[RMDB]
This 177-nucleotide RNA was probed chemically with DMS and 2A3. For DMS, 2,482 sequencing reads were counted. It was measured as part of the RMDB library RFM100. The reactions ran in a buffer of 150 mM KOAc, 10 mM MgCl2 and 150 mM bicine (pH 8.5), at 24 C.

RNA sequence: GGGAACGACUCGAGUAGAGUCGAAAAGUCCGGAGGUUGGCGGUGGGGUAGAGCACUGAUAGGAGGAUCCGGGGGGUGACACCCUCGCCCUCCUGUCAAACUCCGAAUCCACCGCCGCCGUAGAUGGCCUGAAGUUAGUCUUCGGACUAACUUCAGGAAAAGAAACAACAACAACAAC
Reactivity to DMS in 0.01 (KOAc 150mM, MgCl2 10mM, bicine 150mM(pH8.5), 24C), signal-to-noise 2, nucleotides 027 to 126: g000u010c000c000g000g000a100g010g000u000u010g070g000c000g010g010u010g000g000g010g000u010a120g000a000g030c040a100c140u010g000a000u010a010g000g000a000g000g020a040u010c280c050g030g000g010g010g050g020u010g010a300c180a210c000c000c020u000c000g000c300c000c000u000c000c000u000g000u000c000a010a080a130c000u000c040c040g000a070a100u100c000c000a030c020c010g020c010c000g000c000c000g000u020a100g000a040u050g000g000
Reactivity to 2A3 in 0.01 (KOAc 150mM, MgCl2 10mM, bicine 150mM(pH8.5), 24C), signal-to-noise 2, nucleotides 027 to 126: g090u040c030c010g020g000a030g040g050u300u300g000g000c000g000g020u000g010g010g000g060u040a020g000a000g020c020a010c040u000g000a010u010a010g030g010a000g020g010a000u070c070c020g000g000g000g000g000g040u050g010a040c000a060c010c010c000u020c020g000c000c000c000u000c000c020u000g000u010c000a010a040a030c000u010c010c000g050a090a070u000c000c000a000c000c010g000c010c010g000c000c000g000u040a010g000a010u010g030g000